[RMDB]
Description
The record gives the reactivity of an RNA of 177 nucleotides to DMS. Reactivities are given for positions 27 through 126. The DMS profile rests on 673 reads. The reactions ran in a buffer of 150 mM KOAc, 10 mM MgCl2 and 150 mM bicine (pH 8.5), at 24 C. It was measured as part of the RMDB library VIROID.
RNA sequence: GGGAACGACUCGAGUAGAGUCGAAAAUGGGUGAACAACCUUGUGGUUCCUGUGGGUCACCCCGCCCCACGGAAUAAUAAAAGCAGAGGAGUAGAGAGUACUCACCUGUCGUCGGUAGAGAGUACUCCGUGUCGCAUAAGUUCGCUUAUGCGACACGAAAAGAAACAACAACAACAAC
Reactivity to DMS in 0.01 (KOAc 150mM, MgCl2 10mM, bicine 150mM(pH8.5), 24C), signal-to-noise 1, nucleotides 027 to 126: u000g000g010g010u000g000a100a050c100a100a050c030c020u000u000g000u000g030g000u010u000c000c010u010g070u000g000g000g000u010c000a210c030c000c000c050g000c190c000c010c000a030c010g010g000a060a080u010a170a120u030a030a020a110a220g000c030a020g000a100g010g010a170g010u010a070g000a170g000a030g020u000a000c000u010c010a060c030c030u000g030u010c230g050u000c180g030g020u000a120g010a300g010a010g010u010a020c010u000c010